An RNA of 207 nucleotides, treated with 2A3 and read out base by base. Reactivities are given for positions 27 through 156. The RNA was probed in 150 mM KOAc, 10 mM MgCl2 and 150 mM bicine (pH 8.5) at 24 C. Reactivities are rounded to 0.1 and cut off at 0 and 3. For 2A3, 919 sequencing reads were counted.
RNA sequence: GGGAACGACUCGAGUAGAGUCGAAAAUGCAUGGUUUAAUCGCCACGAUCGCGUCACGAUGGAAAACACUGAACACCAUACGCUCAGCCUUUAUACCGCCGGUGGCUAUGAGAGCUAUCAUAAAACGGCGGACGGCUGGCAUAACGGCGGCGGGCCGCAUGACCGGACGAUUCGUCGUCCGGUCAUGAAAAGAAACAACAACAACAAC
Reactivity to 2A3 in 0.01 (KOAc 150mM, MgCl2 10mM, bicine 150mM(pH8.5), 24C), signal-to-noise 2, nucleotides 027 to 156: u100g020c010a010u020g060g000u110u130u040a130a070u180c060g000c020c000a060c040g090a090u110c030g000c020g140u040c040a020c170g050a050u000g000g000a060a100a040a060c080a040c110u180g030a070a020c010a030c010c010a000u130a060c050g050c010u080c040a000g000c000c000u130u200u040a130u090a150c000c000g000c000c000g020g000u040g020g000c060u040a120u240g140a150g000a000g060c030u070a040u000c040a030u120a170a190a010a010c060g000g000c010g030g000a000c010g000g020c000u000g040g000c000a010u040a030a020c030g020g000c000g060g070c000g000g070g000c000c010g010